[RMDB]
RNA sequence: GGGAACGACUCGAGUAGAGUCGAAAAGAGUGGUACAAUGUGGACACCAUGGUCAAGAUGCGCUUCUUCGACGAUAACACCCGCUCCUGGUGGACACCCAUCACCGGCGGCGCGAACGUGCCGGCGCAGAUAUAUAGGUGUUCGCACCUAUAUAUCUAAAAGAAACAACAACAACAAC
Reactivity to 2A3 in 0.01 (KOAc 150mM, MgCl2 10mM, bicine 150mM(pH8.5), 24C), signal-to-noise 9, nucleotides 027 to 126: g080a030g030u060g010g020u110a070c100a110a160u190g020u070g070g020a020c010a010c040c030a050u130g030g020u060c040a030a020g020a080u090g050c080g030c120u050u010c010u050u090c090g070a060c030g050a080u060a160a050c040a050c030c010c010g010c010u020c010c020u010g010g000u010g000g010a020c010a070c030c010c000a030u060c020a010c030c000g040g020c010g020g000c010g010c010g050a180a060c100g010u030g000c000c000g050g010c050g000c040
Reactivity to DMS in 0.01 (KOAc 150mM, MgCl2 10mM, bicine 150mM(pH8.5), 24C), signal-to-noise 9, nucleotides 027 to 126: g010a090g040u000g010g010u000a070c120a080a080u010g010u010g000g010a110c060a030c040c030a050u000g020g010u010c070a090a080g000a080u010g010c060g010c080u000u000c070u000u000c120g020a060c080g010a100u000a080a110c100a080c040c030c030g010c110u000c080c030u000g010g020u000g000g000a090c090a070c050c060c040a060u000c050a050c090c020g000g010c030g000g010c030g020c060g000a060a080c130g030u000g010c010c020g010g000c050g010c220
This 177-nucleotide RNA was probed chemically with 2A3 and DMS. Source: RMDB library OK2TRN, as collected in RNAgym. The reactions ran in a buffer of 150 mM KOAc, 10 mM MgCl2 and 150 mM bicine (pH 8.5), at 24 C.